Chemical mapping of a 207-nucleotide RNA with DMS and 2A3. It was measured as part of the RMDB library OK3TST. The reactions ran in a buffer of 150 mM KOAc, 10 mM MgCl2 and 150 mM bicine (pH 8.5), at 24 C. High 2A3 reactivity points to a flexible backbone, as in loops and unpaired stretches. Values cover nucleotides 27 to 156.
RNA sequence: GGGAACGACUCGAGUAGAGUCGAAAAAAGAUAUUUCCAUUUAUCUACUGUUCCUAAUAUCAUAUGUGGUGGUGUAGUAGAACCAUUAAGCGCGAAAGAUGUUAUUUCGCAUUGUAUUUUAACUUCGCAAUAAUUUCUGGUUAGAUAACGCACUCUAAAAUCUUCCUUUAUUCGUAAAGGAAGAUUUAAAAGAAACAACAACAACAAC
Reactivity to DMS in 0.01 (KOAc 150mM, MgCl2 10mM, bicine 150mM(pH8.5), 24C), signal-to-noise 3, nucleotides 027 to 156: a100a050g030a060u010a040u010u000u010c030c030a190u010u010u010a030u010c030u000a070c100u000g000u000u000c000c000u000a130a100u000a070u010c090a130u000a070u010g030u000g010g010u000g010g020u000g010u000a100g030u010a090g010a070a090c060c020a100u000u010a050a100g030c120g020c020g000a040a090a100g000a110u010g010u000u000a090u000u000u000c070g000c060a100u000u000g030u010a110u010u010u000u000a060a100c100u000u000c100g050c070a070a090u000a070a120u000u010u000c050u000g010g010u000u000a070g000a100u000a060a050c020g030c040a080c020u000c020u000a100
Reactivity to 2A3 in 0.01 (KOAc 150mM, MgCl2 10mM, bicine 150mM(pH8.5), 24C), signal-to-noise 4, nucleotides 027 to 156: a000a000g050a010u060a030u030u060u080c040c010a040u060u080u040a040u000c010u040a060c060u080g050u050u050c010c010u060a100a100u060a060u260c070a040u080a090u290g080u040g040g040u050g050g000u040g030u010a100g010u000a020g030a040a010c020c000a020u070u070a060a030g070c070g000c020g090a030a030a030g100a030u100g020u100u080a100u090u090u060c020g000c010a000u010u030g020u040a120u030u210u030u040a080a110c060u070u100c050g010c020a030a120u070a120a150u060u070u060c020u030g020g000u020u060a030g020a120u070a090a010c030g000c010a010c010u030c020u040a070